[RMDB]
This 207-nucleotide RNA was probed chemically with DMS and 2A3. The DMS profile rests on 2,666 reads. It was measured as part of the RMDB library M2RFPK. DMS adducts were read by reverse transcription with MarathonRT. 2A3 adducts were read by reverse transcription with SuperScript II with manganese.

RNA sequence: GGGAACGACUCGAGUAGAGUCGAAAAAACUCAGCCAGGGAGAGUAUAACAUUCAUGUUGACGAGACCUAGACGAAACACAGAGGAAAAUUAUUAAUCACUGGAUAGUAUUAGUAAUGACUCUGUGUAAAACUCUUCUACGUUCGCGUAGAAGAGAAGAUUAUGGGAAACUUCGGUUUCCCAUAAUCAAAAGAAACAACAACAACAAC
Reactivity to DMS in 0.01 (KOAc 150mM, MgCl2 10mM, bicine 150mM(pH8.5), 24C), signal-to-noise 2, nucleotides 027 to 156: a060a080c020u000c020a120g000c030c030a010g030g020g000a170g020a070g020u070a060u020a090a050c030a130u000u000c110a100u010g020u000u000g020a060c030g040a140g020a090c010c020u000a060g000a190c060g030a150a080a040c010a000c000a020g010a000g020g000a050a110a100a050u000u010a010u000u000a010a000u000c100a110c030u030g000g010a180u010a080g020u050a040u010u000a040g010u000a000a010u000g020a180c000u000c000u000g030u010g020u010a010a020a040a110c000u010c010u000u010c000u000a000c010g020u010u010c300g030c000g000u000a000g010a020a000g000a010g000a020a060
Reactivity to 2A3 in 0.01 (KOAc 150mM, MgCl2 10mM, bicine 150mM(pH8.5), 24C), signal-to-noise 2, nucleotides 027 to 156: a000a000c020u010c030a000g010c040c000a030g000g030g010a040g000a020g050u110a080u060a300a050c020a020u060u120c020a050u170g030u040u040g050a040c030g010a010g040a070c020c030u030a050g030a080c040g050a030a050a010c000a020c000a010g000a000g020g040a030a170a030a030u000u000a000u000u000a000a000u020c060a010c040u060g070g080a110u300a300g010u030a000u010u000a010g000u000a000a000u010g010a010c000u020c000u000g000u000g000u000a000a000a000a000c000u000c000u000u000c000u000a000c000g030u040u030c200g010c000g080u000a010g000a000a000g000a000g000a010a010